Structure probing data (DMS and 2A3) for a 177-nucleotide construct. 2A3 adducts were read by reverse transcription with SuperScript II with manganese. Conditions: 150 mM KOAc, 10 mM MgCl2 and 150 mM bicine (pH 8.5), 24 C. Source: RMDB library OK2TRN, as collected in RNAgym. As a SHAPE reagent, 2A3 marks flexible, mostly unpaired nucleotides at the ribose 2'-OH. For 2A3, 27,734 sequencing reads were counted.
RNA sequence: GGGAACGACUCGAGUAGAGUCGAAAAAUGGAUCGAUCAGCUAGUACGUCGAUCACUAGCUAGAGCGAGUACCUAGCGUACCGGUACCCAUGGUGAUCGCGCAGCGAUAUGCUAGUAUGUACUCGCGUCAACUCAUUAUCUUCGGAUAAUGAGUUGAAAAAGAAACAACAACAACAAC
Reactivity to DMS in 0.01 (KOAc 150mM, MgCl2 10mM, bicine 150mM(pH8.5), 24C), signal-to-noise 9, nucleotides 027 to 126: a080u000g010g010a080u000c020g010a060u000c070a050g010c010u000a010g010u000a090c150g010u010c180g010a120u010c110a040c020u000a020g010c020u000a090g010a120g010c000g010a010g010u000a010c010c010u000a010g000c010g020u000a010c010c010g010g010u010a120c010c010c020a120u010g010g000u000g010a030u000c020g020c210g010c090a100g010c010g010a020u000a010u000g000c000u000a010g000u010a090u010g010u000a010c010u000c010g020c010g010
Reactivity to 2A3 in 0.01 (KOAc 150mM, MgCl2 10mM, bicine 150mM(pH8.5), 24C), signal-to-noise 9, nucleotides 027 to 126: a000u160g080g010a040u060c040g020a020u080c080a010g020c030u050a010g030u080a050c100g140u060c080g180a150u070c040a010c030u020a010g030c010u040a040g030a010g130c000g000a000g000u000a010c000c010u000a010g000c010g020u030a010c000c010g010g080u150a140c010c010c010a040u100g030g010u040g020a030u030c010g000c050g040c190a120g030c000g020a020u030a030u190g000c000u000a010g030u070a150u210g000u000a000c000u000c000g010c000g000